[RMDB]
RNA sequence: GGGAACGACUCGAGUAGAGUCGAAAAUCCCCAUAGUUCGCUAUGGGGAAAAGCCGUACCGCGUAGCACGCGGAUAGGAGCGAAGAUAUCCUCGGCACGCGAAAACCUUCGCCUUCGGGCGAAGGAAGACUGAAGGAGAGUUCGCUCUCCUUCAGUCAAAAGAAACAACAACAACAAC
Reactivity to DMS in 0.01 (KOAc 150mM, MgCl2 10mM, bicine 150mM(pH8.5), 24C), signal-to-noise 2, nucleotides 027 to 126: u000c010c000c010c010a010u000a010g010u000u000c150g040c000u000a020u000g010g020g000g000a000a000a040a130g000c000c000g020u000a120c170c030g010c000g010u000a150g030c000a290c000g010c100g010g010a040u000a000g000g010a120g020c200g000a060a090g000a110u000a070u000c000c000u000c000g010g000c030a030c040g000c020g000a110a050a190a170c000c000u010u010c010g000c000c010u000u000c150g040g020g030c000g000a010a010g000g000a030a070
Reactivity to 2A3 in 0.01 (KOAc 150mM, MgCl2 10mM, bicine 150mM(pH8.5), 24C), signal-to-noise 2, nucleotides 027 to 126: u020c000c000c000c000a000u000a000g020u040u000c230g010c090u000a010u000g000g010g000g100a050a060a030a000g020c010c000g090u100a130c050c010g000c010g020u020a050g020c080a100c300g000c000g000g000a000u020a010g060g030a070g090c110g070a050a030g030a150u050a020u060c000c010u000c000g000g000c000a010c020g010c000g040a010a020a060a120c000c000u000u010c000g000c000c010u040u110c300g060g010g000c010g010a000a000g000g000a000a000